An RNA of 177 nucleotides, treated with DMS and read out base by base. The reactions ran in a buffer of 150 mM KOAc, 10 mM MgCl2 and 150 mM bicine (pH 8.5), at 24 C. Reactivities are rounded to 0.1 and cut off at 0 and 3. It was measured as part of the RMDB library TTRDEL.

RNA sequence: GGGAACGACUCGAGUAGAGUCGAAAAGAUAUGGAGCGUUGGACAUGCCUCAAGGAUCGGAAACGAUCCGAAGGGCAACAGCCACCGCUCCUAAGUCAAAACUGGGUACUGUUCGCAGUACCCAGAACCACCUGGUCUAGUUCGCUAGACCAGGUGGAAAAGAAACAACAACAACAAC
Reactivity to DMS in 0.01 (KOAc 150mM, MgCl2 10mM, bicine 150mM(pH8.5), 24C), signal-to-noise 1, nucleotides 027 to 126: g010a020u030a300u000g000g000a000g040c000g020u000u010g000g000a000c060a300u000g070c000c000u000c030a070a300g000g000a000u010c000g020g000a100a080a120c000g040a020u000c020c000g000a050a120g000g010g000c010a060a010c150a090g000c000c000a000c070c010g000c000u000c000c000u000a000a090g000u000c030a180a040a220a170c010u010g030g000g010u000a000c000u000g010u000u070c280g010c000a000g000u000a000c000c000c000a000g000a030a120